Chemical mapping of a 177-nucleotide RNA with 2A3 and DMS. Reactivities are rounded to 0.1 and cut off at 0 and 3. DMS adducts were read by reverse transcription with MarathonRT.
RNA sequence: GGGAACGACUCGAGUAGAGUCGAAAACAUGGGACGGUUAUCUCGACGAUUUGGCUAUCGAUUUGGCUGCCGACACUUGACGACUACCAUGUUAAUGACGGUGCGGUUUCUUAUGGAGGGCUGAACAUAAACACGUGGAGUUCGCUCCACGUGUUUAAAAAGAAACAACAACAACAAC
Reactivity to 2A3 in 0.01 (KOAc 150mM, MgCl2 10mM, bicine 150mM(pH8.5), 24C), signal-to-noise 3, nucleotides 027 to 126: c020a040u060g000g010g060a040c080g050g020u090u020a050u040c020u020c030g140a110c050g040a110u040u040u080g080g020c060u070a020u120c030g130a110u070u060u190g070g010c010u010g000c010c020g070a040c010a020c050u030u070g050a020c030g040a030c020u030a060c010c000a020u070g020u020u090a100a090u130g030a010c030g020g070u050g000c030g040g000u050u010u000c020u040u160a120u130g060g000a010g040g000g000c030u040g000a040a000c030a100
Reactivity to DMS in 0.01 (KOAc 150mM, MgCl2 10mM, bicine 150mM(pH8.5), 24C), signal-to-noise 3, nucleotides 027 to 126: c070a050u030g000g000g010a090c220g020g000u000u000a060u000c010u010c030g020a080c090g010a100u000u010u010g020g000c040u010a070u010c120g000a150u010u060u030g000g010c040u000g000c060c010g010a110c110a050c060u010u020g000a130c060g010a090c020u050a100c050c020a050u000g010u000u000a090a080u000g000a020c130g000g020u010g010c260g010g000u000u000u010c040u010u000a100u000g010g000a020g000g000g010c010u000g000a050a050c140a150